[RMDB]
RNA sequence: GGGAACGACUCGAGUAGAGUCGAAAAGAAGAACUGUAGGGACUACAGGGAUAGCCUAGGGCAUAUAAGAUAGAUAUAGCGUUUAGUCGAUCAUUUGUCUUUUUCUAGGAAAUUUCUAGUUAAAUAGUCAUCACUUAACCUUCGGGUUAAGUGAUGAAAAAGAAACAACAACAACAAC
Reactivity to 2A3 in 0.01 (KOAc 150mM, MgCl2 10mM, bicine 150mM(pH8.5), 24C), signal-to-noise 3, nucleotides 027 to 126: g090a040a020g010a030a010c020u020g000u040a030g070g060g180a090c030u010a010c020a010g010g000g060a060u120a010g010c000c000u000a000g040g020g070c100a020u080a000u040a180a030g020a010u040a020g040a010u080a020u060a090g100c010g030u010u120u110a120g080u140c010g030a030u010c010a010u040u030u000g000u000c000u000u070u000u040u020c020u010a000g030g000a040a040a020u090u130u010c030u050a060g050u110u110a090a090a080u040a050g080
Reactivity to DMS in 0.01 (KOAc 150mM, MgCl2 10mM, bicine 150mM(pH8.5), 24C), signal-to-noise 3, nucleotides 027 to 126: g020a090a080g030a220a200c020u000g010u010a030g000g020g000a270c020u030a040c050a020g030g010g000a110u020a090g000c000c020u010a010g000g020g000c300a070u040a030u010a030a020g030a040u000a010g000a030u000a030u010a110g020c030g000u000u010u070a070g000u020c030g000a040u000c180a060u010u000u000g000u010c000u000u000u000u000u000c000u000a020g000g000a030a080a130u000u000u000c010u000a050g000u000u000a050a040a100u050a200g000